RNA sequence: GGGAACGACUCGAGUAGAGUCGAAAAUGAUAUGGACCUAUCCACUGGCAGAGGCACAGAGGUACUUCGGAAACGAAGUACUCCCCACCUGUGCUACCCACCUGCCAGUGGAUAGGUCCUAAGUCUACAUUAAUUGCAGCUUCGGCUGCAAUUAAUGAAAAGAAACAACAACAACAAC
Reactivity to DMS in 0.01 (KOAc 150mM, MgCl2 10mM, bicine 150mM(pH8.5), 24C), signal-to-noise 1, nucleotides 027 to 126: u010g000a000u000a300u020g010g000a010c000c010u010a000u000c000c000a000c020u000g000g000c000a030g000a110g010g000c000a020c000a010g030a130g060g000u010a000c000u000u000c010g000g010a140a150a150c000g060a020a020g010u000a000c060u000c050c040c020c030a300c130c000u000g040u000g000c030u000a020c090c050c050a300c070c000u000g000c000c000a000g040u010g000g000a000u010a000g000g000u000c000c000u000a010a080g000u000c050u010a120
An RNA of 177 nucleotides, treated with DMS and read out base by base. For DMS, 775 sequencing reads were counted. The data come from the RNA Mapping Database (RMDB), library TTRINS. Conditions: 150 mM KOAc, 10 mM MgCl2 and 150 mM bicine (pH 8.5), 24 C. For DMS the reverse transcriptase was MarathonRT.